Chemical mapping of a 177-nucleotide RNA with DMS and 2A3. The data come from the RNA Mapping Database (RMDB), library OK1LIB.
RNA sequence: GGGAACGACUCGAGUAGAGUCGAAAAUCGAAGACGAUCAGAUACCGUCCUAGUUCUAACCAUAAACGAUGCCGACUAGGGAUCGGGUGGUGUUAUUGUAUGACCCUUUCGGCACCUUGCAGGGAAACCCUGGUAAUAUUUUCGAAUAUUACCAGGGAAAAGAAACAACAACAACAAC
Reactivity to DMS in 0.01 (KOAc 150mM, MgCl2 10mM, bicine 150mM(pH8.5), 24C), signal-to-noise 7, nucleotides 027 to 126: u010c040g010a120a170g000a040c050g030a060u010c090a130g010a080u020a060c090c030g020u010c030c010u000a120g000u010u010c070u020a080a150c030c010a070u030a090a090a110c090g020a050u000g000c040c090g000a060c130u040a070g000g000g000a050u000c020g000g000g020u000g010g020u010g000u010u010a080u000u020g000u010a080u010g000a090c030c010c020u000u010u010c040g000g000c030a040c060c040u010u010g010c120a080g000g000g010a110a060a100
Reactivity to 2A3 in 0.01 (KOAc 150mM, MgCl2 10mM, bicine 150mM(pH8.5), 24C), signal-to-noise 9, nucleotides 027 to 126: u110c020g030a070a020g100a040c060g030a050u080c060a070g100a130u130a130c010c020g020u020c000c010u020a030g020u060u030c050u070a080a110c030c000a100u140a100a130a020c120g080a050u080g040c030c000g020a050c060u030a030g030g050g090a170u120c030g020g010g020u040g030g040u090g070u170u120a210u130u120g110u070a090u140g080a090c010c000c000u020u050u040c000g040g000c010a020c000c010u040u130g060c090a070g010g000g070a020a060a060
The RNA was probed in 150 mM KOAc, 10 mM MgCl2 and 150 mM bicine (pH 8.5) at 24 C. In probing experiments dimethyl sulfate is read out at A N1 and C N3, which are open when not base-paired. Values cover nucleotides 27 to 126. 2A3 adducts were read by reverse transcription with SuperScript II with manganese.